[RMDB]
RNA sequence: GGGAACGACUCGAGUAGAGUCGAAAAUGAUUUCAAGCGUUUUUAUUUUAGCACCUUUCUAUUCGCAGCAUAGCCCCGGUGGCGAAGGGCUAAACAUCCCCUACAACAGUGUAGUGUGGCUGGCGGCCAAACCUACCCGUUUCGACGGGUAGGUUUGAAAAGAAACAACAACAACAAC
Reactivity to DMS in 0.01 (KOAc 150mM, MgCl2 10mM, bicine 150mM(pH8.5), 24C), signal-to-noise 1, nucleotides 027 to 126: u010g010a090u010u010u000c140a090a240g010c050g010u010u000u000u020u000a080u000u000u010u000a050g020c030a070c000c040u010u000u000c040u000a070u000u010c040g000c070a040g030c050a080u020a140g000c040c020c070c060g030g000u000g010g000c070g000a100a000g010g010g010c010u010a010a050a120c190a090u000c020c000c010c030u000a100c070a080a150c210a090g010u000g000u000a020g000u010g010u000g010g030c070u000g010g000c090g030g020c120